[RMDB]
RNA sequence: GGGAACGACUCGAGUAGAGUCGAAAAAUGCUGUACAGUGAAGCCCGGAUUCUGUGUGUGCUGCGUUUGCUGAUUUGCCAUACACAUAAAUAUACGUAGCACCACAUGAUUCGGCUUCGUGGUGCUACUUAACUGGCUGGUUCGCCAGCCAGUUAAGAAAAGAAACAACAACAACAAC
Reactivity to DMS in 0.01 (KOAc 150mM, MgCl2 10mM, bicine 150mM(pH8.5), 24C), signal-to-noise 2, nucleotides 027 to 126: a050u030g000c070u000g010u000a060c020a130g030u000g000a030a020g000c120c060c040g030g000a040u000u000c180u000g010u010g010u010g020u000g010c050u010g010c030g020u000u010u010g020c130u000g010a150u010u020u000g010c120c120a070u000a130c140a100c080a050u010a080a120a090u020a080u010a060c040g010u000a000g000c000a020c000c000a000c000a000u010g000a030u000u000c010g020g000c000u000u000c000g010u010g000g000u000g000c000u010a110
Reactivity to 2A3 in 0.01 (KOAc 150mM, MgCl2 10mM, bicine 150mM(pH8.5), 24C), signal-to-noise 2, nucleotides 027 to 126: a000u130g000c030u040g000u050a030c020a010g040u020g040a010a000g030c120c080c060g070g000a000u030u050c020u000g000u000g010u010g000u000g070c000u000g000c000g020u020u090u050g070c050u020g100a300u120u110u130g040c010c020a110u140a210c070a000c030a080u230a060a160a010u220a010u000a020c010g000u000a000g010c000a000c000c000a000c000a010u020g000a010u000u000c010g000g000c000u010u020c000g030u010g020g050u000g000c010u030a040
The record gives the reactivity of an RNA of 177 nucleotides to DMS and 2A3. Conditions: 150 mM KOAc, 10 mM MgCl2 and 150 mM bicine (pH 8.5), 24 C. DMS adducts were read by reverse transcription with MarathonRT. For DMS, 1,712 sequencing reads were counted. 2A3 adducts were read by reverse transcription with SuperScript II with manganese. Source: RMDB library RFMREP, as collected in RNAgym. The 2A3 profile rests on 1,350 reads. High DMS reactivity at an A or C suggests that its Watson-Crick edge is free.